[RMDB]
RNA sequence: GGGAACGACUCGAGUAGAGUCGAAAAGAUAGGGGGUUCGCCCCCUAUCAAAGGUGCAAUGUACUUUCUGCACCAAAGACGCAAAAACCGUCAAAGUACAAAAAACGAUGGCGUUCGCGCCAUCGAACGUUAUGUAAACCUUCGGGUUUACAUAACGAAAAGAAACAACAACAACAAC
Reactivity to DMS in 0.01 (KOAc 150mM, MgCl2 10mM, bicine 150mM(pH8.5), 24C), signal-to-noise 2, nucleotides 027 to 126: g000a000u000a000g010g020g020g020g000u000u010c270g000c000c000c000c020c010u000a000u000c000a000a090a060g000g020u000g000c000a030a180u010g030u000a010c010u000u010u000c120u010g000c000a020c000c020a030a070a050g010a080c080g010c070a040a050a060a060a110c270c060g000u000c070a020a020a010g000u000a000c010a000a070a050a140a090a080c000g000a010u000g010g000c000g000u000u000c250g010c000g020c000c000a000u000c000g010a000a060
Reactivity to 2A3 in 0.01 (KOAc 150mM, MgCl2 10mM, bicine 150mM(pH8.5), 24C), signal-to-noise 2, nucleotides 027 to 126: g000a000u010a000g030g000g000g010g010u010u010c020g080c000c000c010c000c010u010a000u000c000a010a010a010g000g010u000g000c020a020a100u130g000u030a020c010u010u110u060c070u050g000c000a000c000c000a020a020a050g020a020c040g000c100a210a110a060a050a120c070c030g080u100c020a060a010a030g020u010a020c000a010a170a000a010a030a000c030g000a010u000g000g010c010g020u060u060c300g010c000g000c030c000a000u000c000g000a030a010